Source information:
An RNA of 177 nucleotides, treated with DMS and 2A3 and read out base by base. For DMS, 2,940 sequencing reads were counted. For 2A3, 2,132 sequencing reads were counted. It was measured as part of the RMDB library OK2TRN.

RNA sequence: GGGAACGACUCGAGUAGAGUCGAAAAGUUCAAGGAAGACACCCCUCCCAGAGGAAUCUUUAUGGCUUGCUGAGUAUAGCAAGAAACAGGUCAGCUAGCCCUUUCUGAAGCUGCAGCUCGAAGUCAGGAAGAAUGAUUCUUUCGAGAAUCAUUCUUCAAAAGAAACAACAACAACAAC
Reactivity to DMS in 0.01 (KOAc 150mM, MgCl2 10mM, bicine 150mM(pH8.5), 24C), signal-to-noise 4, nucleotides 027 to 126: g020u020u000c070a070a130g020g020a090a080g010a130c080a250c100c010c020c020u000c010c000c010a140g010a080g000g010a080a070u000c040u000u000u000a110u010g010g020c000u000u000g000c000u000g000a100g010u000a120u000a070g020c010a060a030g000a050a040a050c240a070g010g000u000c060a070g010c150u010a090g010c070c010c070u000u000u000c020u000g000a120a120g000c030u000g000c070a080g010c010u000c030g000a100a030g010u010c040a090g020
Reactivity to 2A3 in 0.01 (KOAc 150mM, MgCl2 10mM, bicine 150mM(pH8.5), 24C), signal-to-noise 2, nucleotides 027 to 126: g020u050u080c040a060a030g100g040a080a080g080a030c040a050c000c020c030c000u000c000c030c000a050g000a040g030g050a100a060u020c010u020u170u090a120u170g030g000c010u010u040g010c050u120g000a040g070u120a050u140a160g050c040a060a030g000a010a030a020c070a010g060g030u070c020a020g030c090u050a020g030c000c000c000u020u060u000c040u030g070a120a030g000c010u040g000c040a020g010c010u020c040g040a040a020g040u000c010a020g000